[RMDB]
RNA sequence: GGGAACGACUCGAGUAGAGUCGAAAAUAACCCCUAUACUUGUAUAGGCGAUUAAUAAAUCUUCUGUAAAUGCUGUAAGAGGAUUACCCCUUGAGGUUUCAGCACUAGGCUGCUCUAGCGAUUAAUCCUAUUACCUGAAAUUCGUUUCAGGUAAUAGAAAAGAAACAACAACAACAAC
Reactivity to 2A3 in 0.01 (KOAc 150mM, MgCl2 10mM, bicine 150mM(pH8.5), 24C), signal-to-noise 9, nucleotides 027 to 126: u050a020a050c010c000c000c000u010a000u010a050c060u110u240g060u070a030u020a030g020g020c040g060a060u040u110a090a080u090a110a090a020u010c010u050u000c010u030g220u240a070a120a120u160g050c050u060g070u090a070a010g010a010g040g010a010u000u060a060c010c000c010c030u040u100g040a100g080g030u050u090u140c010a010g010c000a020c060u050a050g190g000c030u040g030c010u080c020u080a020g020c010g060a080u060u120a040a040u050c000
Reactivity to DMS in 0.01 (KOAc 150mM, MgCl2 10mM, bicine 150mM(pH8.5), 24C), signal-to-noise 7, nucleotides 027 to 126: u010a100a130c040c080c000c020u000a010u000a020c030u020u010g010u000a010u000a020g010g010c120g010a040u000u010a030a070u000a050a040a020u000c000u000u000c010u010g000u020a080a100a090u010g010c080u010g010u010a130a080g000a020g000g000a030u000u000a070c040c010c010c150u020u000g010a090g010g000u000u000u000c020a030g020c010a140c050u010a030g010g010c120u010g010c100u010c010u000a030g010c050g000a070u010u000a060a070u010c060
Chemical mapping of a 177-nucleotide RNA with 2A3 and DMS. 2A3 adducts were read by reverse transcription with SuperScript II with manganese. The RNA was probed in 150 mM KOAc, 10 mM MgCl2 and 150 mM bicine (pH 8.5) at 24 C. As a SHAPE reagent, 2A3 marks flexible, mostly unpaired nucleotides at the ribose 2'-OH. In probing experiments dimethyl sulfate is read out at A N1 and C N3, which are open when not base-paired.